[RMDB]
RNA sequence: GGGAACGACUCGAGUAGAGUCGAAAAGUGGCGUCAGCGAGGCAUGGGAUAGCACGUACUCCGGAACAAGUGUGUGGUGUUGGCCAGAGGAGGUCUUGUGCCAACGGCAUCACUGAUUGAUGGCCAAAUUUUACCCCUACUUCGGUAGGGGUAAAAUAAAAGAAACAACAACAACAAC
Reactivity to 2A3 in 0.01 (KOAc 150mM, MgCl2 10mM, bicine 150mM(pH8.5), 24C), signal-to-noise 2, nucleotides 027 to 126: g060u020g020g010c020g020u000c030a020g020c060g100a050g000g060c040a020u080g030g000g070a030u070a090g030c040a000c040g050u070a060c050u000c040c010g040g010a050a050c050a080a020g000u000g000u000g010u050g110g300u050g070u090u080g020g000c040c010a030g010a030g110g080a110g000g160u010c000u010u070g060u140g000c000c010a020a030c000g040g000c000a000u020c010a000c040u040g060a120u060u060g060a040u030g070g000c020c000a010a090
Reactivity to DMS in 0.01 (KOAc 150mM, MgCl2 10mM, bicine 150mM(pH8.5), 24C), signal-to-noise 3, nucleotides 027 to 126: g030u000g010g000c020g020u000c040a080g030c090g010a080g010g010c070a080u000g010g000g000a090u000a080g000c050a050c080g020u000a050c060u000c010c020g010g020a090a070c140a130a050g000u000g020u010g040u000g000g010u000g010u010u010g010g010c020c020a050g010a080g000g000a110g030g010u000c030u010u010g010u010g010c000c000a040a040c040g000g000c000a020u000c030a030c040u000g010a120u000u000g010a090u010g020g020c010c030a040a080